[RMDB]
RNA sequence: GGGAACGACUCGAGUAGAGUCGAAAAAACGCUUCACAACCUGAAAGAAGCGCCUGUUAUCAGGACGGUUGAUCCAUUUACCGGUGCAGACCUCUGCAAACACCGGGUUGCAGAACAUCGCGACGAACAAGGGAGGAUACCUUCGGGUAUCCUCCAAGUUAAAUCCCUAGUUCGCUAGGGAUUUAACAAAAGAAACAACAACAACAAC
Reactivity to 2A3 in 0.01 (KOAc 150mM, MgCl2 10mM, bicine 150mM(pH8.5), 24C), signal-to-noise 4, nucleotides 027 to 156: a000a000c010g000c000u000u000c010a030c000a050a020c010c000u000g000a000a000a000g000a000a000g010c010g050c000c000u170g020u210u190a230u300c020a000g000g000a000c020g000g010u010u000g020a110u080c040c030a050u090u140u160a090c010c000g000g000u020g020c020a000g100a230c040c060u070c020u080g050c060a010a100a000c060a020c040c060g100g020g010u010u030g000c010a000g020a140a060c020a070u110c080g010c020g050a070c040g020a090a050c030a140a080g070g000g000a020g000g000a000u000a000c000c000u020u110c140g060g000g000u000a000u000c000c000u000c000c000a000a000
Reactivity to DMS in 0.01 (KOAc 150mM, MgCl2 10mM, bicine 150mM(pH8.5), 24C), signal-to-noise 2, nucleotides 027 to 156: a040a060c010g000c000u010u000c000a120c060a050a300c020c020u010g000a120a170a110g000a020a030g050c030g030c020c090u000g000u000u000a160u000c020a030g030g020a120c020g000g030u000u000g010a230u000c080c050a130u000u010u000a070c010c020g030g000u010g010c020a060g000a100c110c050u000c070u000g000c040a130a080a020c000a100c040c020g020g010g010u000u000g010c010a080g050a080a140c070a100u010c030g000c040g030a280c020g000a040a110c110a070a190g010g000g000a000g000g000a010u000a010c010c000u000u000c300g030g010g000u000a020u000c000c000u000c000c000a010a050
Chemical mapping of a 207-nucleotide RNA with 2A3 and DMS. Values cover nucleotides 27 to 156. For DMS the reverse transcriptase was MarathonRT. For 2A3, 2,104 sequencing reads were counted. 2A3 adducts were read by reverse transcription with SuperScript II with manganese.